[RMDB]
RNA sequence: GGGAACGACUCGAGUAGAGUCGAAAAGAUAUGGACCCUGUAGCUAGCUCGUCGGAAACGACGGAGCUUGGACCUACGAAGGGUCCUAAGUCAAAUCAUUAAGAUCCGUUCGCGGAUCUUAAUGAAAUCAUGAGCAUUACUUCGGUAAUGCUCAUGAAAAAGAAACAACAACAACAAC
Reactivity to 2A3 in 0.01 (KOAc 150mM, MgCl2 10mM, bicine 150mM(pH8.5), 24C), signal-to-noise 2, nucleotides 027 to 126: g010a020u080a020u090g000g010a000c010c000c030u030g020u010a040g070c050u010a000g010c010u010c000g000u010c000g040g040a070a070a070c000g000a010c000g110g040a010g010c000u010u070g000g060a150c030c000u000a010c030g250a190a120g010g020g000u000c000c000u010a060a000g010u020c070a000a040a140u010c040a000u000u000a000a010g020a010u000c000c020g010u060u080c300g010c020g100g010a000u010c000u000u010a010a000u000g010a010a000a000
Reactivity to DMS in 0.01 (KOAc 150mM, MgCl2 10mM, bicine 150mM(pH8.5), 24C), signal-to-noise 4, nucleotides 027 to 126: g010a040u000a290u010g000g010a020c000c000c000u000g000u000a010g000c030u000a020g030c000u000c000g020u010c010g000g000a100a060a200c010g010a010c000g000g020a020g000c000u000u000g000g010a110c300c020u000a010c020g000a160a070g010g020g020u000c000c000u000a010a080g000u000c040a100a120a130u010c010a010u000u000a000a000g000a000u000c000c000g020u000u010c280g020c020g030g010a000u000c000u000u000a000a000u000g010a020a090a110

Background: This 177-nucleotide RNA was probed chemically with 2A3 and DMS. For DMS the reverse transcriptase was MarathonRT. 2A3 adducts were read by reverse transcription with SuperScript II with manganese.